Conditions: 150 mM KOAc, 10 mM MgCl2 and 150 mM bicine (pH 8.5), 24 C. The record gives the reactivity of an RNA of 177 nucleotides to 2A3 and DMS. 2A3 adducts were read by reverse transcription with SuperScript II with manganese. It was measured as part of the RMDB library TTRDES. For DMS, 8,948 sequencing reads were counted.
RNA sequence: GGGAACGACUCGAGUAGAGUCGAAAAGAUAUGGACAGUCUCUAUAAGCGACGAAGCUCUGUCGGAAACGACAGAGCAGAGCUUGAUAGAGGACUGUCCUAAGUCAAAAGGUUCCUUCGGGAACCAACUUUGUUACUAAGUUCGCUUAGUAACAAAGAAAAGAAACAACAACAACAAC
Reactivity to 2A3 in 0.01 (KOAc 150mM, MgCl2 10mM, bicine 150mM(pH8.5), 24C), signal-to-noise 5, nucleotides 027 to 126: g010a020u070a050u170g000g010a000c010a000g010u020c000u000c000u010a010u020a050a020g010c020g300a300c060g040a280a000g000c000u010c010u020g000u010c000g010g000a040a090a040c000g000a010c000a000g040a000g000c000a000g010a000g000c010u050u090g300a010u030a010g030a090g100g060a000c000u000g010u000c000c000u000a010a000g000u000c020a010a010a070a280g000g000u010u010c000c000u030u090c300g070g000g000a000a000c000c000a000a010
Reactivity to DMS in 0.01 (KOAc 150mM, MgCl2 10mM, bicine 150mM(pH8.5), 24C), signal-to-noise 6, nucleotides 027 to 126: g000a040u000a300u000g010g000a010c000a010g010u000c000u000c000u000a010u000a030a010g010c010g000a150c230g000a120a100g020c000u000c000u000g010u000c000g000g020a130a080a190c010g010a010c010a000g000a020g050c000a000g000a100g020c000u000u000g010a030u000a000g010a040g020g010a020c000u000g000u000c000c000u010a020a080g010u000c040a110a090a140a150g010g010u000u000c000c000u000u010c260g040g010g000a010a010c000c000a040a050